[RMDB]
RNA sequence: GGGAACGACUCGAGUAGAGUCGAAAACAAUGGAGAACUCACCAAACCGUUCAUUUGCCAAAUACGCUACCUAACCAUUAGUAGUUGAAGGAGAUGGAACUGCUAGGAUGGAUACACACGCAGUCAAUAGAUCCACGUCAUUCGUGACGUGGAUCUAAAAAGAAACAACAACAACAAC
Reactivity to 2A3 in 0.01 (KOAc 150mM, MgCl2 10mM, bicine 150mM(pH8.5), 24C), signal-to-noise 2, nucleotides 027 to 126: c000a000a270u160g020g000a090g000a020a010c010u060c010a080c020c000a100a120a070c020c020g050u020u000c000a080u000u000u210g110c000c090a090a120a040u070a080c120g000c000u040a020c000c000u080a020a170c000c020a040u000u010a000g000u000a000g000u000u050g050a090a040g040g080a100g000a040u090g040g060a080a030c010u020g020c020u070a020g070g070a030u040g040g010a000u080a090c050a000c020a020c020g030c010a000g010u060c000a030a030
Reactivity to DMS in 0.01 (KOAc 150mM, MgCl2 10mM, bicine 150mM(pH8.5), 24C), signal-to-noise 1, nucleotides 027 to 126: c080a180a040u130g000g040a020g050a020a010c070u000c000a130c150c080a050a010a090c120c030g030u000u000c020a060u070u000u050g000c000c020a080a000a060u000a090c150g000c000u000a000c000c000u010a200a170c220c120a000u000u040a170g050u000a000g000u010u000g000a230a010g020g000a050g030a050u010g000g000a050a000c030u010g000c000u000a180g010g000a010u000g000g000a080u000a110c000a020c050a030c120g010c050a000g000u000c120a050a080

Chemical mapping of a 177-nucleotide RNA with 2A3 and DMS. The reactions ran in a buffer of 150 mM KOAc, 10 mM MgCl2 and 150 mM bicine (pH 8.5), at 24 C. 2A3 adducts were read by reverse transcription with SuperScript II with manganese. As a SHAPE reagent, 2A3 marks flexible, mostly unpaired nucleotides at the ribose 2'-OH.